[RMDB]
This 207-nucleotide RNA was probed chemically with DMS and 2A3.
The 2A3 profile rests on 2,820 reads.
The DMS profile rests on 3,163 reads.
RNA sequence: GGGAACGACUCGAGUAGAGUCGAAAAAUGACAAUUCGUUGUCAUAGUAUGGGGUCACGAGUGGGACAUGAAGGGUACUGAAGCCUCCACGGUACCUCUUCAACAGCCGUAACAUCUCGUGACGGAGGCACCCUUUUGAGAUGAUUUCGAUCAUCAAAUACUUUUCGAUUUUCGAAUCGAAAAGUAUAAAAGAAACAACAACAACAAC
Reactivity to DMS in 0.01 (KOAc 150mM, MgCl2 10mM, bicine 150mM(pH8.5), 24C), signal-to-noise 2, nucleotides 027 to 156: a060u020g010a000c030a010a080u000u000c280g040u000u000g010u010c000a070u000a070g040u000a090u020g000g000g050g020u010c010a040c010g050a040g060u010g020g020g010a130c070a180u000g020a010a050g000g010g030u000a110c010u000g000a040a160g020c020c000u000c010c020a300c050g020g020u000a020c000c010u010c020u010u000c000a060a160c100a160g050c160c070g000u000a090a130c050a100u000c020u000c010g050u000g020a040c030g020g010a010g090g120c030a110c030c000c050u000u020u000u000g000a130g010a040u000g010a060u000u000u000c260g040a090u000c020a030u000c000a060a200
Reactivity to 2A3 in 0.01 (KOAc 150mM, MgCl2 10mM, bicine 150mM(pH8.5), 24C), signal-to-noise 4, nucleotides 027 to 156: a000u010g000a000c000a010a020u020u070c230g060u130u020g010u010c010a010u020a010g110u070a130u250g190g040g050g000u010c000a000c000g010a020g020u040g010g130g130a050c070a140u170g000a010a000g010g010g000u000a000c000u010g020a100a020g000c010c000u000c000c000a020c000g000g000u000a000c000c040u150c030u070u000c010a130a180c060a080g290c100c080g050u060a060a020c030a040u180c000u000c010g000u010g000a000c010g000g000a000g000g020c010a000c020c000c000u060u090u130u270g270a210g000a000u000g010a010u020u140u270c250g100a020u000c010a010u010c000a000a140